This 177-nucleotide RNA was probed chemically with DMS and 2A3. For 2A3 the reverse transcriptase was SuperScript II with manganese. The reactions ran in a buffer of 150 mM KOAc, 10 mM MgCl2 and 150 mM bicine (pH 8.5), at 24 C. Source: RMDB libraries RFM100 and RFMREP, as collected in RNAgym. DMS adducts were read by reverse transcription with MarathonRT.

RNA sequence: GGGAACGACUCGAGUAGAGUCGAAAAAAUAUAAUUGCUUAAAAAAAAAAACUUGAAGUUAGCACGAUAAUCAGGGCAUAAGAUGUUAUAAAUUGUGAGCAUCCUAUGCAGUACAAGUUUGUGCACAAUUACUACUUAUGUUCGCAUAAGUAGUAAUAAAAGAAACAACAACAACAAC
Reactivity to DMS in 0.01 (KOAc 150mM, MgCl2 10mM, bicine 150mM(pH8.5), 24C), signal-to-noise 5, nucleotides 027 to 126: a070a070u030a060u020a100a080u010u020g000c030u020u020a020a010a000a000a010a000a100a110a060a080a120c070u020u020g000a070a130g010u010u000a070g010c020a010c010g000a030u010a060a060u030c150a090g000g000g000c000a010u000a000a020g000a010u000g010u000u000a050u030a040a060a100u030u030g020u020g010a080g000c000a000u000c010c040u000a000u000g000c020a030g010u010a080c270a030a060g010u000u000u000g010u000g000c020a090c160a050
Reactivity to 2A3 in 0.01 (KOAc 150mM, MgCl2 10mM, bicine 150mM(pH8.5), 24C), signal-to-noise 5, nucleotides 027 to 126: a000a000u250a020u060a100a180u130u110g010c020u050u100a080a060a000a000a000a010a000a000a010a010a020c060u080u090g040a110a030g080u110u080a030g030c020a000c010g020a020u060a080a040u120c060a030g020g030g060c000a000u000a010a000g010a000u010g020u050u060a140u080a230a280a240u210u210g110u090g110a020g000c000a000u000c000c000u000a000u000g000c000a010g040u060a020c020a090a090g020u020u110u090g010u050g010c010a020c010a050